[RMDB]
An RNA of 207 nucleotides, treated with DMS and 2A3 and read out base by base. The 2A3 profile rests on 6,233 reads. It was measured as part of the RMDB library M2RFPK.
RNA sequence: GGGAACGACUCGAGUAGAGUCGAAAAAGCCAUACCAUUACGAUGGUAUGGCAAGUCCGUGACGGCGAUGGAUCCCGCCUGGCCGAUGCCGAACUGCCGAUCUGGGUGAUGGUUCCUGCCCCGUCAAAAAACGUAAAGCACUUCGGUGCUUUACGAACGAUACAACCUAGUUCGCUAGGUUGUAUCGAAAAGAAACAACAACAACAAC
Reactivity to DMS in 0.01 (KOAc 150mM, MgCl2 10mM, bicine 150mM(pH8.5), 24C), signal-to-noise 2, nucleotides 027 to 156: a110g030c000c010a020u000a000c000c010a040u000u000a100c300g020a150u000g020g050u010a010u000g020g040c010a010a020g010u000c010c030g040u000g000a060c010g010g020c030g000a210u000g020g020a030u010c000c020c070g050c000c000u000g010g010c010c020g020a140u010g020c040c020g030a110a100c100u000g020c020c010g000a070u000c030u000g000g010g030u000g000a140u000g030g000u000u000c010c010u000g000c070c050c010c020g020u000c020a000a020a070a080a090a130c030g050u000a010a010a010g000c000a010c010u000u000c270g070g020u000g010c000u010u010u000a000c000g010a030a070
Reactivity to 2A3 in 0.01 (KOAc 150mM, MgCl2 10mM, bicine 150mM(pH8.5), 24C), signal-to-noise 4, nucleotides 027 to 156: a000g000c000c000a000u000a000c000c000a000u060u040a060c260g100a020u000g000g000u000a000u000g000g000c000a000a010g030u000c020c010g030u040g020a010c010g010g020c140g040a040u050g000g010a010u040c000c000c000g000c000c010u010g000g010c010c020g040a050u120g020c020c030g200a250a100c110u200g000c010c020g020a060u050c010u040g000g020g000u010g040a190u120g010g010u020u010c000c000u050g050c000c010c020c000g000u000c000a040a060a050a000a030a000c010g000u000a000a000a000g000c000a010c000u050u070c210g090g010u000g000c000u000u010u000a000c000g000a010a000